[RMDB]
An RNA of 207 nucleotides, treated with 2A3 and read out base by base.
RNA sequence: GGGAACGACUCGAGUAGAGUCGAAAAGAAAGAAAGAAAUGAGUUUUCUGCGACUGACGGAUUAUUGCAGAGCACUGCAAGGGAACAGAAAAACUCUUUUUCAGGCGACCGUCUGGGCACACCUGAAUCACGACCGGAAGCUUCGGCUUCCGGUCAACGAUUCUUACAAGUUCGCUUGUAAGAAUCGAAAAGAAACAACAACAACAAC
Reactivity to 2A3 in 0.01 (KOAc 150mM, MgCl2 10mM, bicine 150mM(pH8.5), 24C), signal-to-noise 1, nucleotides 027 to 156: g040a010a070a010g050a030a080a000g070a010a110a100u120g010a010g000u000u000u000u000c000u000g020c030g060a090c110u060g040a030c040g110g050a080u060u090a050u300u000g010c020a020g050a090g230c030a110c300u000g020c000a000a030g010g000g000a000a030c020a010g020a030a020a000a000a000c000u060c100u080u060u000u000u000c000a000g010g000c010g060a030c050c020g210u220c190u240g030g060g000c110a020c020a020c090c000u000g020a040a040u080c100a030c140g000a000c010c000g020g000a000a000g000c010u000u050c220g040g060c000u000u000c000c000g040g000u000c000a020a000